[RMDB]
RNA sequence: GGGAACGACUCGAGUAGAGUCGAAAAACCUUUGUGAGGUCACAGCCAUAGGGAGAAGUAGUAGGUGCCCAUUGGGCACCGAAACUUCGAAGAACUAUGGUCACAGCCUCACUCUGGUAAAGCAUAGUUACUUGGCUUCGGCCAAGUAACUAUGCAACAGCAUACACAAGUUCGCUUGUGUAUGCUGAAAAGAAACAACAACAACAAC
Reactivity to 2A3 in 0.01 (KOAc 150mM, MgCl2 10mM, bicine 150mM(pH8.5), 24C), signal-to-noise 2, nucleotides 027 to 156: a000c000c000u000u000u000g000u000g000a000g030g010u070c020a000c030a040g010c010c010a000u000a010g010g020g020a030g000a000a000g010u020a000g010u000a010g040g000u000g020c010c010c040a130u250u300g010g000g000c000a000c000c010g000a000a000a000c000u000u000c000g020a050a020g020a000a010c010u000a000u000g000g010u010c010a010c010a010g000c000c000u000c000a000c000u000c010u000g000g000u090a140a110a000g000c000a000u000a000g000u020u000a000c000u000u000g010g000c010u020u080c270g020g010c000c000a000a000g000u000a000a000c000u000a000u000g000c010a000a000
Reactivity to DMS in 0.01 (KOAc 150mM, MgCl2 10mM, bicine 150mM(pH8.5), 24C), signal-to-noise 1, nucleotides 027 to 156: a030c010c050u000u010u000g000u000g020a000g020g090u000c030a300c200a300g000c010c000a020u030a000g000g020g000a210g040a010a010g000u000a050g040u000a120g000g010u020g010c000c000c020a300u010u010g100g030g000c000a040c030c000g030a070a150a080c010u010u000c000g020a100a100g010a160a210c000u050a000u000g000g000u000c080a080c300a280g010c020c010u000c010a010c030u000c030u010g000g000u000a060a080a130g010c000a020u000a010g000u010u000a000c000u000u010g000g000c020u000u020c250g050g030c000c000a000a020g000u000a000a000c000u000a000u000g010c000a020a040
Structure probing data (2A3 and DMS) for a 207-nucleotide construct.
For DMS the reverse transcriptase was MarathonRT.
For 2A3, 2,525 sequencing reads were counted.
2A3 adducts were read by reverse transcription with SuperScript II with manganese.
The RNA was probed in 150 mM KOAc, 10 mM MgCl2 and 150 mM bicine (pH 8.5) at 24 C.